[RMDB]
RNA sequence: GGGAACGACUCGAGUAGAGUCGAAAAACGAUGUGGACAGCAGCGUGUUCUCCCCCCGACCGGGUGCUAACGAGCGCCCCUUGUGGAAGAAGGAAGGCAGCGACCGACGCCCGUCCUCGGCGCUGUCCGGCCGCGAGGGUGCUGCCGCGGCGGUGCCUAUAGUGUUACACUUCGGUGUAACACUAUAAAAAGAAACAACAACAACAAC
Reactivity to DMS in 0.01 (KOAc 150mM, MgCl2 10mM, bicine 150mM(pH8.5), 24C), signal-to-noise 1, nucleotides 027 to 156: a060c030g020a090u010g010u010g020g030a050c090a150g010c010a080g010c040g070u010g000u010u010c030u010c000c000c000c000c000c000g000a170c150c040g000g020g050u000g040c040u010a090a120c000g000a200g050c020g000c000c000c000c050u010u010g050u000g060g030a210a130g080a210a240g020g000a200a080g010g010c000a090g000c000g000a150c020c020g020a060c040g040c070c030c190g020u000c010c010u000c060g020g000c000g000c000u020g010u000c000c020g000g030c000c010g030c050g000a110g010g020g000u000g040c000u000g040c040c010g010c030g020g000c050g000g010u000g020c030c020
Reactivity to 2A3 in 0.01 (KOAc 150mM, MgCl2 10mM, bicine 150mM(pH8.5), 24C), signal-to-noise 1, nucleotides 027 to 156: a000c020g020a060u060g040u090g000g150a130c010a050g050c040a000g000c050g010u060g060u270u030c030u110c010c000c050c020c000c000g000a040c040c000g040g000g000u110g030c030u070a160a040c020g040a050g030c010g000c010c000c000c000u020u000g000u020g010g050a050a160g030a020a070g130g020a010a030g000g020c020a000g010c010g150a300c010c010g040a000c030g080c000c160c020g050u250c010c020u010c060g000g000c010g000c000u000g020u020c000c010g010g000c000c000g010c000g000a020g000g050g040u180g030c090u190g030c000c040g070c020g030g010c010g000g020u000g010c020c010